About this RNA: Chemical mapping of a 177-nucleotide RNA with DMS.

RNA sequence: GGGAACGACUCGAGUAGAGUCGAAAAGAUAUGGAACACGAAGACAGGAGUUGCACCCAGGUAGCGAAACCAUCGGAAACGAUGGUUCGCUAUAAUCUGGGUGCAACUCUCGAGUGUUCCUAAGUCACUCAGAAAAUAGGUUCGCCUAUUUUCUGAGAAAAGAAACAACAACAACAAC
Reactivity to DMS in 0.01 (KOAc 150mM, MgCl2 10mM, bicine 150mM(pH8.5), 24C), signal-to-noise 3, nucleotides 027 to 126: g020a080u020a300u000g010g000a020a000c000a010c010g000a120a190g010a110c300a080g000g000a010g000u010u000g010c010a010c000c000c000a000g010g020u000a010g000c000g010a050a010a030c000c000a010u010c000g000g000a180a080a140c000g030a000u000g000g000u000u010c000g000c000u000a010u000a280a110u000c000u000g000g000g000u010g000c000a000a020c020u010c000u000c020g000a080g010u000g000u000u010c000c000u010a000a050g000u000c070a300

Reactivities are given for positions 27 through 126. For DMS the reverse transcriptase was MarathonRT. The data come from the RNA Mapping Database (RMDB), library TTRINS.